Structure probing data (2A3 and DMS) for a 177-nucleotide construct. For 2A3, 3,828 sequencing reads were counted. It was measured as part of the RMDB library TTRDEL. 2A3 is a SHAPE reagent: it acylates the 2'-hydroxyl of flexible nucleotides of all four kinds. For 2A3 the reverse transcriptase was SuperScript II with manganese. Conditions: 150 mM KOAc, 10 mM MgCl2 and 150 mM bicine (pH 8.5), 24 C. For DMS, 2,597 sequencing reads were counted.
RNA sequence: GGGAACGACUCGAGUAGAGUCGAAAAGAUAUGGACGUGGGAUGGGAGCCUCUCGGAAACGAGAAGGCGAAGAACAUUCCACGUCCUAAGUCAAAGUACAACGUUCGCUUCGGCGAACGUUGUACAAUCAUUAUCACAGCUUCGGCUGUGAUAAUGAAAAAGAAACAACAACAACAAC
Reactivity to 2A3 in 0.01 (KOAc 150mM, MgCl2 10mM, bicine 150mM(pH8.5), 24C), signal-to-noise 1, nucleotides 027 to 126: g020a020u080a050u100g020g010a010c000g000u000g020g000g010a010u010g000g030g050a000g000c000c010u000c010u020c010g030g020a090a050a040c020g010a020g060a090a210g020g010c000g050a060a020g000a020a010c000a030u000u020c000c010a000c010g000u020c010c000u010a000a000g020u020c020a040a000a090g000u000a000c000a020a000c010g000u010u000c020g020c010u040u090c200g140g000c000g020a010a000c000g000u010u000g000u000a000c000a010a000
Reactivity to DMS in 0.01 (KOAc 150mM, MgCl2 10mM, bicine 150mM(pH8.5), 24C), signal-to-noise 2, nucleotides 027 to 126: g000a050u010a300u000g010g010a000c000g010u000g000g000g000a000u000g010g010g030a200g000c000c000u000c000u000c000g020g000a060a080a160c010g000a020g000a070a060g030g010c020g000a030a090g010a120a150c000a010u000u000c000c000a000c010g010u000c000c000u000a000a080g000u000c010a110a110a100g000u010a020c000a010a000c020g000u000u000c000g020c000u000u010c190g040g020c020g000a000a000c010g010u000u000g010u010a000c000a070a040